[RMDB]
RNA sequence: GGGAACGACUCGAGUAGAGUCGAAAAGAUCGUGAGCUGGGUUUAGACCGUCGUGAGACAGGUCGGUUGCUAUCUAACGGGGGUGUCAGGGCGGCUGAGGGGAAGGAGGCUCUAGUACGAGAGGAACCACACUGCCGUUGUUCGCAACGGCAGUGUGAAAAGAAACAACAACAACAAC
Reactivity to 2A3 in 0.01 (KOAc 150mM, MgCl2 10mM, bicine 150mM(pH8.5), 24C), signal-to-noise 2, nucleotides 027 to 126: g060a060u050c000g020u100g070a010g030c040u040g010g120g000u100u050u050a030g040a040c000c000g000u030c040g060u070g050a070g000a020c040a090g000g000u000c000g010g000u070u020g030c030u070a100u150c040u040a050a070c060g000g000g030g000g010u100g120u080c030a000g030g100g000c040g010g060c070u020g030a050g000g000g060g010a030a160g040g020a020g010g000c000u030c000u000a030g030u120a060c060g110a040g000a010g070g040a000a000c000
Reactivity to DMS in 0.01 (KOAc 150mM, MgCl2 10mM, bicine 150mM(pH8.5), 24C), signal-to-noise 1, nucleotides 027 to 126: g000a020u000c080g000u000g000a090g000c060u000g000g000g010u000u000u000a110g020a000c040c050g010u000c000g000u100g020a110g060a020c010a030g080g050u020c040g000g020u000u000g000c020u020a030u000c050u010a030a090c070g040g000g000g000g010u040g020u010c150a150g000g000g000c200g000g020c100u000g000a110g010g000g000g010a050a000g000g000a260g010g000c000u000c050u010a190g010u000a100c080g000a150g000a160g000g000a150a130c210

An RNA of 177 nucleotides, treated with 2A3 and DMS and read out base by base.
For DMS, 1,478 sequencing reads were counted.